RNA sequence: GGGAACGACUCGAGUAGAGUCGAAAAGAAGUGGCAGGGACAUGCCCCAAAAGCUCGUUCUAGCAACAUAUGUUUGGCUAGUUCGAGCGAUUAGUCUCGAGGAGCGUCCUCUCGCCUGUUCACGAGAAUGACUCGUCGCUUUCGAGCGACGAGUCAUAAAAGAAACAACAACAACAAC
Reactivity to 2A3 in 0.01 (KOAc 150mM, MgCl2 10mM, bicine 150mM(pH8.5), 24C), signal-to-noise 1, nucleotides 027 to 126: g100a100a000g090u090g070g000c010a030g010g010g000a110c030a250u060g170c000c000c000c000a000a120a000a000g000c000u000c000g000u000u000c000u000a000g090c130a000a060c090a150u300a000u140g150u130u300u140g040g010c070u000a000g010u000u000c000g000a000g000c000g000a000u000u000a000g130u000c060u000c190g000a070g030g040a090g150c250g030u010c000c000u010c000u000c010g000c000c000u000g000u200u200c000a000c070g010a000g010a120